[RMDB]
RNA sequence: GGGAACGACUCGAGUAGAGUCGAAAAUUAAUGAAGCAAAUCUCCAAAGGCCAACGAUGAGCGUUUCGCAAUCGCCGCUUAAGGCUUUUGCCGAGGCUGCUUGAGCCUUGUUACCAAAGAAAAGCCGAAAACCCAAAUGUCUUCGGACAUUUGGGAAGUUGAAUAAACAGUUCGCUGUUUAUUCAACAAAAGAAACAACAACAACAAC
Reactivity to DMS in 0.01 (KOAc 150mM, MgCl2 10mM, bicine 150mM(pH8.5), 24C), signal-to-noise 2, nucleotides 027 to 156: u000u010a080a070u000g000a120a080g000c040a060a120a130u000c000u000c030c030a050a130a050g000g000c030c010a040a090c060g030a120u000g010a070g060c010g030u000u010u010c070g040c010a060a050u010c060g010c050c070g000c190u000u000a070a240g000g010c040u010u000u010u000g050c040c010g000a090g010g060c000u000g070c020u000u000g000a090g000c000c020u000u000g020u000u000a260c060c060a080a090a230g000a090a070a090a110g000c050c030g000a080a030a080a130c000c000c010a020a010a020u000g010u000c000u000u010c300g040g000a020c000a020u000u000u000g000g000g000a000a010
Reactivity to 2A3 in 0.01 (KOAc 150mM, MgCl2 10mM, bicine 150mM(pH8.5), 24C), signal-to-noise 4, nucleotides 027 to 156: u140u100a040a070u140g070a070a020g010c020a060a090a140u060c060u030c070c020a060a030a010g010g020c020c020a110a020c100g110a130u220g050a050g030c020g030u040u060u070c010g000c010a000a010u020c030g000c020c010g050c110u200u200a160a050g000g000c000u000u000u020u010g030c060c030g010a010g030g000c050u070g000c020u050u030g020a020g000c000c010u000u010g020u030u070a070c040c010a050a050a010g050a010a100a050a010g100c060c070g080a040a080a080a130c020c000c000a000a000a000u010g000u000c000u010u020c070g070g000a000c000a000u010u000u000g000g000g000a000a000
About this RNA:
The record gives the reactivity of an RNA of 207 nucleotides to DMS and 2A3. For 2A3, 3,414 sequencing reads were counted. DMS adducts were read by reverse transcription with MarathonRT.